[RMDB]
RNA sequence: GGGAACGACUCGAGUAGAGUCGAAAAGCAUAUCGCGAUAUAUUAGCGCGCCGCGCGUAUAUAUACGGCCGAUCGCGGCUACGAUCGUAAUAUAUCGGCGCUAGCAUAUUAAUGCUAUAUAGCCGGCAAGUUAAGUCCGAUUCGUCGGACUUAACUUAAAAGAAACAACAACAACAAC
Reactivity to 2A3 in 0.01 (KOAc 150mM, MgCl2 10mM, bicine 150mM(pH8.5), 24C), signal-to-noise 1, nucleotides 027 to 126: g000c050a050u070a030u260c060g000c030g030a000u000a010u000a010u090u040a060g130c000g000c070g000c000c030g040c030g000c000g060u000a090u020a000u000a020u030a220c040g020g000c050c100g040a010u060c030g000c000g010g010c010u020a000c020g020a070u080c050g030u060a100a020u090a030u020a000u080c010g050g000c030g100c090u030a000g050c010a000u020a100u100u180a300a090u090g000c000u010a010u000a000u030a180g000c020c000g050g000c070
Reactivity to DMS in 0.01 (KOAc 150mM, MgCl2 10mM, bicine 150mM(pH8.5), 24C), signal-to-noise 2, nucleotides 027 to 126: g020c070a090u000a060u020c120g020c050g010a000u000a010u010a040u000u000a100g020c010g030c300g030c050c080g020c090g040c010g040u000a010u010a100u000a130u000a060c030g000g020c000c030g000a060u010c030g010c030g010g000c010u000a050c050g010a060u000c040g000u000a030a030u010a010u000a020u000c010g040g010c000g010c150u020a010g020c020a020u000a100u020u010a110a060u010g000c030u000a050u030a080u010a130g010c040c020g010g000c190